[RMDB]
RNA sequence: GGGAACGACUCGAGUAGAGUCGAAAAACUGAGCUUCGGCGGAAAGUGGCAAAUGCACUGCCAUCUGGUCACCAUCGAAGUCAGCGUUGAAUGCGGCGCAAGCAAGUGGUGGAAGGUGAAUUGCAAAGGUAUCCAUGGGUUUCGACCCAUGGAUACCAAAAGAAACAACAACAACAAC
Reactivity to DMS in 0.01 (KOAc 150mM, MgCl2 10mM, bicine 150mM(pH8.5), 24C), signal-to-noise 1, nucleotides 027 to 126: a110c040u010g000a150g000c000u010u030c000g050g000c040g000g030a140a070a140g030u000g010g030c070a010a120a160u020g000c170a070c130u000g030c030c000a050u000c010u000g000g020u000c180a180c010c050a000u010c010g000a050a050g020u000c040a010g000c080g010u020u000g010a080a090u010g000c110g030g010c160g010c120a100a120g020c050a040a060g050u000g000g010u000g000g000a100a070g000g010u000g000a070a110u010u000g020c070a040a120a100
Reactivity to 2A3 in 0.01 (KOAc 150mM, MgCl2 10mM, bicine 150mM(pH8.5), 24C), signal-to-noise 1, nucleotides 027 to 126: a000c000u010g030a010g180c010u010u020c010g000g000c020g070g010a240a010a000g020u040g030g020c020a040a060a160u100g000c020a040c050u020g000c000c000a040u110c050u010g070g100u060c030a020c060c000a010u000c020g020a030a020g010u030c020a020g000c050g020u010u040g160a180a130u130g050c070g010g010c040g010c040a080a130g070c080a050a050g050u050g070g000u020g070g040a070a030g010g000u080g040a160a100u040u000g070c040a080a130a010

Chemical mapping of a 177-nucleotide RNA with DMS and 2A3. Values cover nucleotides 27 to 126. DMS (dimethyl sulfate) methylates the pairing face of unpaired adenines and cytosines.